RNA sequence: GGGAACGACUCGAGUAGAGUCGAAAAAUGUCCAUCAUGUUUUGAAAGUUAUUCUUGCAACUUCCAAAUUGUAAGCAAUGUGGAUACUGUUUGUUACAUAGAAGGACCAUGUACACUUUUCCACAAACCCCUGGAUAUUAUUCGUAAUAUCCAGGGGAAAAGAAACAACAACAACAAC
Reactivity to DMS in 0.01 (KOAc 150mM, MgCl2 10mM, bicine 150mM(pH8.5), 24C), signal-to-noise 4, nucleotides 027 to 126: a070u010g010u020c020c000a140u000c050a070u000g010u000u000u000u000g000a030a070a040g010u000u000a090u000u000c080u000u010g010c110a050a020c040u000u000c080c090a020a110a170u000u000g010u000a040a080g010c210a040a080u000g010u010g010g010a040u010a040c110u000g010u010u000u000g010u010u000a020c040a030u000a090g040a110a090g020g010a070c090c090a030u010g010u010a020c100a060c090u000u000u000u000c010c000a050c130a090a080a160
Reactivity to 2A3 in 0.01 (KOAc 150mM, MgCl2 10mM, bicine 150mM(pH8.5), 24C), signal-to-noise 2, nucleotides 027 to 126: a000u080g020u000c030c000a020u020c030a060u090g050u030u140u140u080g070a040a050a030g020u120u110a060u120u040c050u030u070g120c010a230a300c040u170u030c030c010a120a300a300u080u100g040u080a090a000g010c050a060a110u090g020u050g020g020a040u020a150c050u030g110u240u090u040g030u090u030a000c010a010u030a090g040a060a040g130g020a020c090c000a010u040g060u110a030c050a010c070u090u000u020u020c000c000a060c000a040a080a130

Structure probing data (DMS and 2A3) for a 177-nucleotide construct. For DMS, 3,121 sequencing reads were counted. Source: RMDB library OK2TST, as collected in RNAgym.